Background: An RNA of 207 nucleotides, treated with 2A3 and read out base by base. Conditions: 150 mM KOAc, 10 mM MgCl2 and 150 mM bicine (pH 8.5), 24 C.
RNA sequence: GGGAACGACUCGAGUAGAGUCGAAAAUCUCGACUCGGAUCCUGGCGUCAUCUAUAGAGCCACUGCUCGCAGUCCUCGUCACCGGGGCUGCGGGGACUUUCAGGUGACUGAGCCCGUCCGCAUCUUGUCUGCGUGAGUGCGGGGGCCGAGAAAAACGGGUUACCUAAUUCUUCGGAAUUAGGUAACCAAAAGAAACAACAACAACAAC
Reactivity to 2A3 in 0.01 (KOAc 150mM, MgCl2 10mM, bicine 150mM(pH8.5), 24C), signal-to-noise 2, nucleotides 027 to 156: u020c000u000c000g010a020c010u030c000g100g130a110u030c000c050u040g070g000c020g230u050c020a110u040c140u180a200u090a250g060a020g070c010c040a080c130u120g010c000u000c030g000c000a000g010u000c000c000u020c070g010u010c000a000c000c000g010g000g000g000c000u000g000c000g000g000g010g020a030c040u110u300u190c110a020g000g000u000g000a000c010u010g020a030g000c000c010c040g040u050c020c000g050c010a030u130c040u220u120g120u070c070u110g110c060g080u160g030a060g030u030g000c000g020g000g020g030g000c000c000g000a010g000a080a110a050a000a040c120g000